The record gives the reactivity of an RNA of 177 nucleotides to 2A3 and DMS. DMS adducts were read by reverse transcription with MarathonRT.

RNA sequence: GGGAACGACUCGAGUAGAGUCGAAAACAGAACGCCGCGCGACGAUGAUGAAAUCGGAAAAGAUCGCUGGCGAUGUCAAUGAGGCAGGCGAGCUUCUUUCCGGCCAGGGAUCGCCCGUGCCGUCGCACAUCCUGAGCUGAUUCGUCAGCUCAGGAUGAAAAGAAACAACAACAACAAC
Reactivity to 2A3 in 0.01 (KOAc 150mM, MgCl2 10mM, bicine 150mM(pH8.5), 24C), signal-to-noise 2, nucleotides 027 to 126: c020a010g120a130a020c040g010c040c010g010c040g000c000g060a020c000g020a040u170g010a030u160g130a080a080a110u120c020g020g050a070a070a020a070g020a030u000c050g000c300u020g020g000c000g010a050u100g090u090c040a070a130u210g010a060g050g000c030a010g110g100c030g090a020g000c010u010u040c000u010u050u000c050c040g060g020c000c000a030g010g000g040a030u000c010g050c000c010c010g020u040g000c020c000g030u000c010g040c020a010
Reactivity to DMS in 0.01 (KOAc 150mM, MgCl2 10mM, bicine 150mM(pH8.5), 24C), signal-to-noise 3, nucleotides 027 to 126: c100a190g000a080a150c110g000c060c020g020c090g010c030g010a040c020g000a070u010g020a140u010g000a080a070a140u010c030g000g010a040a070a100a110g000a030u000c030g010c000u010g000g000c010g000a060u000g000u000c110a080a060u000g000a070g020g020c020a050g000g020c160g000a070g010c010u000u000c010u000u010u000c070c090g020g000c030c020a020g000g000g000a030u010c030g030c090c000c020g000u000g020c060c010g000u010c020g010c040a270
It was measured as part of the RMDB library OK2TST.